[RMDB]
RNA sequence: GGGAACGACUCGAGUAGAGUCGAAAAUGGGGGUCCAUCGGCGAGUCUGGAAAUGACUCCAACUCCGAAUGGGAAGAUUUCCUGCACGCCUUCCAUGAAGAAGAAGAAAACUUUAAAAUCUCCCAGACACUAGCCGAUUAUUCGUAAUCGGCUAGUGAAAAGAAACAACAACAACAAC
Reactivity to 2A3 in 0.01 (KOAc 150mM, MgCl2 10mM, bicine 150mM(pH8.5), 24C), signal-to-noise 6, nucleotides 027 to 126: u040g000g000g000g000g020u060c030c010a080u060c050g030g000c050g030a000g020u080c140u080g030g050a020a100a040u210g070a090c040u000c010c000a040a030c050u080c030c050g050a150a100u060g020g020g000a080a050g030a110u060u040u020c010c000u030g020c090a030c070g050c000c000u090u070c020c050a070u150g010a040a100g020a020a010g020a070a020g060a030a150a030a010c030u110u160u150a090a230a090a060u010c000u020c020c000c000a010g010a010
Reactivity to DMS in 0.01 (KOAc 150mM, MgCl2 10mM, bicine 150mM(pH8.5), 24C), signal-to-noise 4, nucleotides 027 to 126: u030g000g000g000g000g000u070c040c080a080u010c070g000g020c300g000a040g000u010c060u010g000g000a050a120a100u010g000a130c090u000c000c190a070a080c120u060c020c110g020a070a070u020g010g000g010a100a100g010a120u020u010u000c030c030u000g010c060a120c120g010c040c000u010u010c010c050a120u030g020a090a090g000a040a070g000a050a110g000a080a050a100a050c030u020u010u000a070a050a110a050u010c050u010c000c000c000a110g000a290
Structure probing data (2A3 and DMS) for a 177-nucleotide construct. Reactivities are rounded to 0.1 and cut off at 0 and 3. The RNA was probed in 150 mM KOAc, 10 mM MgCl2 and 150 mM bicine (pH 8.5) at 24 C. For DMS, 4,548 sequencing reads were counted.